[RMDB]
RNA sequence: GGGAACGACUCGAGUAGAGUCGAAAAUGUCUGUGCAGGUUCAAUAGGACUCUUUAAGGUCACCAGGUAGAGAUAUGAAGAUUGUGGUUGCCCCUGGUAUUUCAAGAUGAUCCUUUGUUUGGGGCAGAAUAUAACUCCUAUUCGUAGGAGUUAUAUUAAAAGAAACAACAACAACAAC
Reactivity to 2A3 in 0.01 (KOAc 150mM, MgCl2 10mM, bicine 150mM(pH8.5), 24C), signal-to-noise 4, nucleotides 027 to 126: u070g010u000c030u020g080u030g060c040a040g040g050u060u100c030a070a080u090a200g040g030a030c020u010c030u110u150u110a100a020g050g010u050c010a010c020c020a020g030g000u050a050g020a020g020a110u050a050u250g050a070a060g100a120u080u220g070u080g100g070u090u060g010c000c010c000c020u020g030g000u070a080u030u120u060c020a030a020g030a080u110g030a060u020c020c000u060u070u130g090u070u100u060g000g000g020g000c010a010g030
Reactivity to DMS in 0.01 (KOAc 150mM, MgCl2 10mM, bicine 150mM(pH8.5), 24C), signal-to-noise 9, nucleotides 027 to 126: u010g010u000c030u000g010u000g010c050a060g010g010u000u000c080a060a100u010a090g010g010a060c040u000c050u000u010u010a110a110g010g010u000c050a060c040c030a040g010g010u000a060g010a090g010a060u000a050u000g000a110a080g000a100u010u010g020u000g010g010u000u000g000c020c030c010c010u000g010g010u000a040u000u000u010c080a050a070g010a090u000g010a110u000c030c010u000u000u010g010u000u000u000g010g010g010g010c040a030g000

Notes: This 177-nucleotide RNA was probed chemically with 2A3 and DMS. 2A3 adducts were read by reverse transcription with SuperScript II with manganese. The RNA was probed in 150 mM KOAc, 10 mM MgCl2 and 150 mM bicine (pH 8.5) at 24 C. The data come from the RNA Mapping Database (RMDB), library OK2TRN.